Chemical mapping of a 177-nucleotide RNA with DMS and 2A3. Values are in units of 0.01, from 0 to 300, in steps of 10. Conditions: 150 mM KOAc, 10 mM MgCl2 and 150 mM bicine (pH 8.5), 24 C.

[RMDB]
RNA sequence: GGGAACGACUCGAGUAGAGUCGAAAAGUGCCGGGCAGCCACGCACCACGGGGUAAGAGCUGAACGCAUCUAAGCUCGAAACCCACCUGGAAACGAGGAACCACCGAGGCCACUCCUACAAGAGGAGGAUUUUUAUUGCAUUCGUGCAAUAAAAAUCAAAAGAAACAACAACAACAAC
Reactivity to DMS in 0.01 (KOAc 150mM, MgCl2 10mM, bicine 150mM(pH8.5), 24C), signal-to-noise 7, nucleotides 027 to 126: g010u000g000c020c020g010g000g010c100a080g010c040c020a090c100g010c100a150c020c020a090c270g000g020g010g020u000a060a280g000a010g010c010u000g000a160a120c130g010c090a030u010c040u000a160a050g010c010u000c000g010a070a090a080c020c000c010a100c060c060u010g010g000a060a090a100c090g010a090g010g000a100a060c070c030a070c040c030g000a100g010g000c030c040a200c010u000c000c000u000a100c240a090a120g010a040g000g010a020g000
Reactivity to 2A3 in 0.01 (KOAc 150mM, MgCl2 10mM, bicine 150mM(pH8.5), 24C), signal-to-noise 9, nucleotides 027 to 126: g090u060g040c020c000g000g020g000c010a020g030c020c000a030c020g010c000a050c010c000a030c050g010g000g000g010u020a050a020g000a000g000c000u010g030a150a030c070g020c090a010u030c050u070a040a010g010c000u000c000g000a070a020a020c010c000c000a060c000c010u030g030g020a080a080a030c050g020a070g050g020a020a030c010c010a020c010c020g020a050g000g040c010c010a040c010u000c000c000u060a100c060a110a080g050a030g160g020a030g030